An RNA of 177 nucleotides, treated with 2A3 and DMS and read out base by base. The reactions ran in a buffer of 150 mM KOAc, 10 mM MgCl2 and 150 mM bicine (pH 8.5), at 24 C. The data come from the RNA Mapping Database (RMDB), libraries RFM100 and RFMREP. 2A3 adducts were read by reverse transcription with SuperScript II with manganese.
RNA sequence: GGGAACGACUCGAGUAGAGUCGAAAACUGUUCCACCUCCCCUCAGACUAGCCUAGAUCAAAGGCAGGGUUCUCUGCAUACUAGUAUGGUGGGUCAAGAAAUCAGCGCCAACAUGGGCUAUCCCUGCACUCCUUUUACGGUUCGCCGUAAAAGGAGUAAAAGAAACAACAACAACAAC
Reactivity to 2A3 in 0.01 (KOAc 150mM, MgCl2 10mM, bicine 150mM(pH8.5), 24C), signal-to-noise 7, nucleotides 027 to 126: c010u020g030u050u030c010c030a080c020c000u050c010c010c010c000u030c000a050g010a100c020u030a010g020c010c010u050a060g040a170u180c130a120a050a010g080g000c010a020g060g010g000u140u030c080u010c010u040g020c000a020u040a150c030u030a070g110u050a090u130g050g010u040g010g010g060u060c050a040a040g070a080a080a030u110c040a020g030c010g040c030c010a070a050c050a180u060g030g000g000c010u020a040u050c000c000c000u030g010c040
Reactivity to DMS in 0.01 (KOAc 150mM, MgCl2 10mM, bicine 150mM(pH8.5), 24C), signal-to-noise 4, nucleotides 027 to 126: c080u010g010u000u000c020c010a080c040c010u010c030c010c010c060u000c070a080g010a080c070u000a100g010c020c020u020a080g010a150u040c150a050a110a080g010g020c000a070g000g010g010u030u000c070u020c020u010g010c040a110u010a090c090u010a120g010u010a060u010g000g040u010g000g000g000u000c110a050a060g000a060a060a060u020c090a060g000c060g030c000c020a040a060c080a120u020g000g010g000c020u000a070u010c020c000c020u000g000c100